[RMDB]
RNA sequence: GGGAACGACUCGAGUAGAGUCGAAAAACAGAGUAUGAGUUCAGUUCCAUAGGUUCGAUAAUGUAGUGUUGUGGAGGCAAAGUCAUACCAUUCUUCUUUAUUAAAUCGACAAAUGCCAAUAACUGGGCGCAUAGCAGUAGUUCGCUACUGCUAUGCGAAAAGAAACAACAACAACAAC
Reactivity to DMS in 0.01 (KOAc 150mM, MgCl2 10mM, bicine 150mM(pH8.5), 24C), signal-to-noise 1, nucleotides 027 to 126: a100c120a080g000a030g000u030a030u040g000a070g000u000u000c070a030g000u000u000c000c050a030u050a000g030g010u000u000c080g010a050u020a060a060u030g000u000a060g000u000g010u000u000g040u020g000g000a120g000g000c040a040a040a140g000u010c020a000u020a090c000c010a100u030u020c050u000u040c030u030u000u040a050u050u000a010a060a060u050c050g000a020c030a030a000a100u000g060c050c010a060a010u030a030a070c150u010g000g000g000
Reactivity to 2A3 in 0.01 (KOAc 150mM, MgCl2 10mM, bicine 150mM(pH8.5), 24C), signal-to-noise 2, nucleotides 027 to 126: a000c050a000g120a000g020u070a160u080g000a110g000u010u010c000a000g070u010u000c000c000a000u000a120g000g260u170u180c040g000a250u080a090a030u230g020u040a000g010u030g000u240u030g010u000g000g030a000g000g130c000a020a020a020g030u070c000a070u020a150c000c000a150u090u000c030u030u030c010u130u060u100a140u000u120a240a100a060u300c040g070a130c070a050a000a000u260g000c170c110a000a030u130a100a090c240u030g000g000g170